Chemical mapping of a 177-nucleotide RNA with DMS and 2A3. The reactions ran in a buffer of 150 mM KOAc, 10 mM MgCl2 and 150 mM bicine (pH 8.5), at 24 C. Reactivities are given for positions 27 through 126.
[RMDB]
RNA sequence: GGGAACGACUCGAGUAGAGUCGAAAAGGAUGACAUCAGCGGCGACUGCUGCAUCUGCUACGCUUAUCGCCUGCCUCCUGCGCAGCCACCCGGCGCUGGCUCCGCCACCCUUGGUGAGGUGCCGGACUACUUAGCUUAUGUUCGCAUAAGCUAAGUAAAAAGAAACAACAACAACAAC
Reactivity to DMS in 0.01 (KOAc 150mM, MgCl2 10mM, bicine 150mM(pH8.5), 24C), signal-to-noise 9, nucleotides 027 to 126: g000g000a070u010g010a120c050a050u010c040a080g010c050g020g010c080g020a120c070u000g010c040u000g000c030a050u000c070u000g010c070u000a080c140g010c050u000u010a080u000c070g010c020c020u010g010c050c020u000c020c030u000g000c050g010c090a060g000c030c050a100c090c010c030g000g000c060g010c030u000g010g010c030u000c050c020g010c110c050a050c040c030c080u010u000g020g020u000g000a210g000g000u000g010c090c010g000g010a160c200
Reactivity to 2A3 in 0.01 (KOAc 150mM, MgCl2 10mM, bicine 150mM(pH8.5), 24C), signal-to-noise 7, nucleotides 027 to 126: g050g020a040u070g040a030c010a060u070c020a020g030c020g180g020c040g100a140c080u060g020c010u020g000c010a060u030c060u090g030c040u060a050c070g010c050u100u110a090u190c040g010c020c010u030g020c020c010u030c010c010u040g020c050g010c030a020g010c010c000a040c030c020c000g020g020c030g010c030u020g030g000c020u040c040c030g040c030c020a070c030c020c030u050u170g080g000u060g050a080g020g010u020g010c010c000g010g000a010c020